The record gives the reactivity of an RNA of 177 nucleotides to 2A3 and DMS.

[RMDB]
RNA sequence: GGGAACGACUCGAGUAGAGUCGAAAAUACAGAACACGUCUCCGAGUCUUAAGCCUAAAAGGAUGGACCUCAUGGCUGACGGGCCGGCAGGGUUUCGCUGGAAACGGCGGAGCCUCCCUUUCGGAAAACCUAGUUCAUUGUUCGCAAUGAACUAGGUAAAAGAAACAACAACAACAAC
Reactivity to 2A3 in 0.01 (KOAc 150mM, MgCl2 10mM, bicine 150mM(pH8.5), 24C), signal-to-noise 1, nucleotides 027 to 126: u100a020c020a010g160a180a050c040a030c170g110u030c000u030c020c000g010a030g040u000c020u060u070a030a010g020c010c000u020a050a010a000a020g010g010a090u210g190g150a240c000c010u000c000a010u030g000g000c010u000g020a020c020g000g000g000c020c010g030g000c060a070g000g000g020u010u000u000c010g010c000u000g010g000a010a020a030c000g000g020c000g010g000a000g000c010c000u010c000c000c000u000u070u060c020g050g000a040a040a040
Reactivity to DMS in 0.01 (KOAc 150mM, MgCl2 10mM, bicine 150mM(pH8.5), 24C), signal-to-noise 3, nucleotides 027 to 126: u010a100c150a110g010a120a110c080a100c150g020u000c010u000c020c020g010a140g010u000c020u000u000a200a030g000c000c000u000a000a070a030a040g010g040a300u010g010g010a230c010c020u000c010a060u020g000g000c010u000g000a140c300g000g010g010c000c000g010g020c090a110g020g010g000u020u000u000c000g000c010u000g000g010a010a010a030c010g010g050c000g020g000a000g010c000c010u000c030c010c010u020u000u000c070g000g000a130a060a060

The RNA was probed in 150 mM KOAc, 10 mM MgCl2 and 150 mM bicine (pH 8.5) at 24 C.
Reactivities are given for positions 27 through 126.
The DMS profile rests on 1,927 reads.